RNA sequence: GGGAACGACUCGAGUAGAGUCGAAAAGCGCUGCCCGGGGGGAACCGGAUUUACCUACGGGAAUCCCUGGGUUCCUCUGAUGUCCAGUCCCUCUCCCGUCCGAGUGAAGGGAGACUCCGGAACUCCAAAAGGAGUCGGUUCGCCGACUCCAAAAGAAACAACAACAACAAC
Reactivity to 2A3 in 0.01 (KOAc 150mM, MgCl2 10mM, bicine 150mM(pH8.5), 24C), signal-to-noise 4, nucleotides 027 to 129: g020c030g000c040u040g020c020c020c030g000g000g000g000g030g000a000a010c000c020g000g000a000u040u050u210a170c000c020u030a050c050g020g000g010a000a020u050c010c000c000u060g080g000g000u010u020c000c010u020c050u060g100a110u080g120u050c000c000a000g030u060c030c000c000u000c000u020c000c000c000g040u040c020c000g060a050g070u150g040a010a030g000g000g000a080g030a020c020u000c020c020g040g020a040a030c000u030c020c030a010a030a030a080
Reactivity to DMS in 0.01 (KOAc 150mM, MgCl2 10mM, bicine 150mM(pH8.5), 24C), signal-to-noise 3, nucleotides 027 to 129: g010c070g050c080u030g030c040c040c040g020g010g010g010g000g010a000a030c000c030g030g010a000u010u000u080a180c120c070u010a090c140g010g000g060a070a110u020c040c010c130u070g070g000g060u000u000c010c000u010c100u040g020a110u040g010u030c000c000a040g040u020c030c020c020u040c010u040c060c010c000g050u000c040c070g060a110g000u030g030a070a090g060g020g010a020g010a050c080u080c050c020g000g040a000a100c030u060c000c000a170a060a130a120